[RMDB]
RNA sequence: GGGAACGACUCGAGUAGAGUCGAAAACUCGUUGUCAUCGAUACCGUAAUCGCCACAUUAACACUGCUCGUGCAAUUGCCAUGGGUGCAAUUUUUAAGGAGUUGUUAUGAUCCACGCCUUUAUUAAAGACUUCCUUAGGAUUCGUCCUAAGGAAGUCAAAAGAAACAACAACAACAAC
Reactivity to 2A3 in 0.01 (KOAc 150mM, MgCl2 10mM, bicine 150mM(pH8.5), 24C), signal-to-noise 1, nucleotides 027 to 126: c000u000c000g040u040u110g050u070c030a060u030c040g040a060u030a150c040c020g000u080a060a040u020c010g010c040c010a070c000a100u140u110a020a000c010a010c050u060g050c010u000c020g160u080g050c050a020a060u060u020g000c000c030a080u100g260g000g000u130g010c010a020a030u050u040u000u030u110a070a020g070g010a050g060u010u030g030u040u020a090u110g060a070u070c040c050a070c020g090c050c070u110u070u050a170u000u050a080a090a000
Reactivity to DMS in 0.01 (KOAc 150mM, MgCl2 10mM, bicine 150mM(pH8.5), 24C), signal-to-noise 3, nucleotides 027 to 126: c020u000c040g050u000u000g010u010c070a070u010c070g000a100u000a040c070c070g010u020a070a060u000c080g000c020c030a080c090a070u000u010a070a060c070a050c070u000g010c020u000c050g000u000g010c290a060a020u020u010g010c020c020a230u030g000g000g060u000g010c040a010a010u000u000u000u010u010a080a110g010g010a070g010u000u000g000u000u000a050u010g000a090u010c030c040a090c120g030c030c010u000u000u020a040u030u020a070a100a160

The data come from the RNA Mapping Database (RMDB), library OK2TST. This 177-nucleotide RNA was probed chemically with 2A3 and DMS. Values cover nucleotides 27 to 126. High DMS reactivity at an A or C suggests that its Watson-Crick edge is free. For 2A3 the reverse transcriptase was SuperScript II with manganese. The reactions ran in a buffer of 150 mM KOAc, 10 mM MgCl2 and 150 mM bicine (pH 8.5), at 24 C.